An RNA of 177 nucleotides, treated with 2A3 and DMS and read out base by base.
RNA sequence: GGGAACGACUCGAGUAGAGUCGAAAAGUACCAUGAGUACGCGCGCUGCGCAUGCACUAGUCAUCAGGCCGCGCCUCGGAUCAGGUACCUGGAUCCUGACGGUACUGACGAUCUGACUACACUGCUGUCUCACCAGCAUUUUCGAAUGCUGGUGAGAAAAAGAAACAACAACAACAAC
Reactivity to 2A3 in 0.01 (KOAc 150mM, MgCl2 10mM, bicine 150mM(pH8.5), 24C), signal-to-noise 1, nucleotides 027 to 126: g020u030a040c000c040a090u170g060a010g060u050a030c070g030c000g020c020g020c030u100g000c020g030c090a020u010g000c040a140c200u200a090g060u250c010a030u040c040a050g020g010c010c000g030c000g000c000c010u000c000g000g000a020u040c030a040g000g060u030a070c000c040u060g060g000a090u060c000c080u050g070a020c030g020g020u040a070c000u000g050a050c090g020a040u000c020u060g020a040c010u100a050c070a040c030u080g020c030u050g090
Reactivity to DMS in 0.01 (KOAc 150mM, MgCl2 10mM, bicine 150mM(pH8.5), 24C), signal-to-noise 2, nucleotides 027 to 126: g010u000a120c030c020a170u000g000a140g020u030a070c080g010c080g000c090g030c030u010g000c100g010c160a060u000g030c050a190c190u010a090g000u010c020a040u000c060a230g020g010c020c020g010c020g000c160c130u000c030g020g010a040u010c000a200g000g000u000a020c030c050u030g010g010a090u020c030c030u000g010a070c190g000g020u000a010c000u000g010a160c290g000a010u000c040u000g000a030c100u010a150c100a000c180u000g010c120u000g000
For 2A3 the reverse transcriptase was SuperScript II with manganese. The reactions ran in a buffer of 150 mM KOAc, 10 mM MgCl2 and 150 mM bicine (pH 8.5), at 24 C. DMS adducts were read by reverse transcription with MarathonRT.